Chemical mapping of a 207-nucleotide RNA with 2A3 and DMS. The DMS profile rests on 4,788 reads. For DMS the reverse transcriptase was MarathonRT. It was measured as part of the RMDB library M2RFPK. The reactions ran in a buffer of 150 mM KOAc, 10 mM MgCl2 and 150 mM bicine (pH 8.5), at 24 C.
RNA sequence: GGGAACGACUCGAGUAGAGUCGAAAAUAGCUGCAACAUUAUCUGAGUAUCCUGAAAACGGGCUUUUCAGAAUGGUGUUGCCGUAUAAAAUUGUAGGAGUGCAUAGUGGCCCGUAUAGCAGGCAUUAGAGAGCUACAGAUGUUCGCAUCUGUAGCAACUUACUACUGUCGUUCGCGACAGUAGUAAGAAAAGAAACAACAACAACAAC
Reactivity to 2A3 in 0.01 (KOAc 150mM, MgCl2 10mM, bicine 150mM(pH8.5), 24C), signal-to-noise 4, nucleotides 027 to 156: u120a020g020c020u020g000c000a010a000c000a000u030u040a000u040c000u000g010a010g030u050a060u060c010c010u040g080a070a050a060a140c120g030g000g020c060u090u070u030u030c030a050g020a140a110u030g000g000u000g000u000u020g000c000c000g010u040a060u090a040a120a030a060u150u180g040u120a050g010g070a040g030u070g010c040a060u060a100g080u050g050g020c020c040c040g030u060a040u080a070g080c100a020g000g000c000a000u020u090a060g020a040g010a020g070c000u010a000c000a000g020a000u010g020u050u070c260g010c090a000u010c000u000g000u000a000g010c000a000a000
Reactivity to DMS in 0.01 (KOAc 150mM, MgCl2 10mM, bicine 150mM(pH8.5), 24C), signal-to-noise 2, nucleotides 027 to 156: u000a120g020c040u010g020c010a040a030c000a030u010u000a080u020c010u020g000a070g030u000a050u010c000c030u000g000a030a050a100a250c100g030g020g000c070u000u000u000u000c020a030g010a070a120u000g000g020u000g010u000u000g000c000c060g000u000a120u000a080a080a070a110u010u000g000u000a110g000g030a110g040u000g020c060a080u000a100g040u000g020g030c010c040c040g020u000a110u000a110g010c040a040g000g030c030a110u000u000a060g010a160g030a150g020c000u000a000c000a010g000a010u000g010u000u000c300g040c020a030u000c000u000g020u000a000g000c000a000a020